Source information: Source: RMDB library RFMREP, as collected in RNAgym. Chemical mapping of a 177-nucleotide RNA with DMS and 2A3. In probing experiments dimethyl sulfate is read out at A N1 and C N3, which are open when not base-paired. For DMS, 1,122 sequencing reads were counted.

[RMDB]
RNA sequence: GGGAACGACUCGAGUAGAGUCGAAAACUCAGAUCAGAAGGUGACUGUGGCUUUGGGUGGAUAUUAAUCAGCCACAGCACUGCCUGGUCAGAAAGAGAAAAUCUUUGUGUCCUUCGGGACACAAAGACAUGGUAUCCGAGUUCGCUCGGAUACCAUGAAAAGAAACAACAACAACAAC
Reactivity to DMS in 0.01 (KOAc 150mM, MgCl2 10mM, bicine 150mM(pH8.5), 24C), signal-to-noise 2, nucleotides 027 to 126: c010u000c050a160g000a040u000c010a000g000a110a300g000g000u000g000a120c000u000g000u000g000g000c010u000u010u000g010g010g040u000g020g020a120u010a120u010u040a070a030u030c060a050g000c000c000a020c000a000g000c010a010c000u000g000c300c000u010g010g000u000c000a160g000a060a080a120g000a100g020a070a010a060a100u000c000u000u000u000g010u000g000u000c000c000u000u010c250g040g000g000a010c000a010c000a010a020a030g000a040
Reactivity to 2A3 in 0.01 (KOAc 150mM, MgCl2 10mM, bicine 150mM(pH8.5), 24C), signal-to-noise 2, nucleotides 027 to 126: c000u000c020a030g010a010u000c010a010g060a160a030g010g000u010g160a300c010u000g000u000g000g030c020u080u180u090g140g040g040u180g050g110a070u050a080u300u270a140a080u100c010a000g000c010c000a010c000a000g000c000a000c000u010g000c000c000u000g030g000u000c000a000g100a010a150a000g180a010g030a000a100a050a030u020c010u030u000u000g000u000g000u020c010c030u010u040c200g050g000g000a010c000a000c000a020a020a000g000a000